[RMDB]
RNA sequence: GGGAACGACUCGAGUAGAGUCGAAAAUGAGGCCAGAGUUUAAGAUCAGCCUGGACAACAUAGCAAGACUUUUUCUCAAAAAAUGUUUUUAAAAAUUAGCUGGGCAGGCCAGGCACGGUGGCUCACGCUUUAGUGCUACCUUCGGGUAGCACUAAAGAAAAGAAACAACAACAACAAC
Reactivity to DMS in 0.01 (KOAc 150mM, MgCl2 10mM, bicine 150mM(pH8.5), 24C), signal-to-noise 1, nucleotides 027 to 126: u000g020a100g000g010c010c030a090g030a170g010u000u000u000a040a070g000a050u000c050a140g000c010c010u000g000g000a040c090a080a080c040a020u010a000g010c050a050a060g000a050c040u000u000u000u000u000c150u020c110a010a030a020a030a020a050u010g000u000u000u000u010u000a030a080a050a060a140u000u000a080g020c010u000g000g000g000c110a110g000g000c010c000a010g020g020c050a050c060g010g030u000g010g020c010u000c040a060c200g040